The record gives the reactivity of an RNA of 177 nucleotides to DMS.
For DMS, 1,006 sequencing reads were counted.
It was measured as part of the RMDB library OK2TST.
[RMDB]
RNA sequence: GGGAACGACUCGAGUAGAGUCGAAAAUCGGGCUGCAAUUAAGUCUGCCGGGCAAUCAUUGAGCAAAAAACAAAUUGGGCAAAUUCGGAAAGCGGCAGUUGCAUAUUUGAGUUUUGAAGAUUCAGUACUAGGAUCACUGAUUCGUCAGUGAUCCUAGAAAAGAAACAACAACAACAAC
Reactivity to DMS in 0.01 (KOAc 150mM, MgCl2 10mM, bicine 150mM(pH8.5), 24C), signal-to-noise 1, nucleotides 027 to 126: u000c030g010g000g030c060u010g010c030a080a070u000u040a110a160g010u010c050u000g020c030c020g000g000g000c090a070a050u000c120a080u000u000g010a110g010c060a000a000a070a100a080a070c100a030a060a060u000u000g000g020g000c080a040a030a120u000u000c120g030g010a080a060a130g010c040g010g010c060a050g000u000u000g000c040a040u020a060u000u000u010g010a110g000u000u000u000u010g010a070a080g030a100u030u030c060a040g020u000a140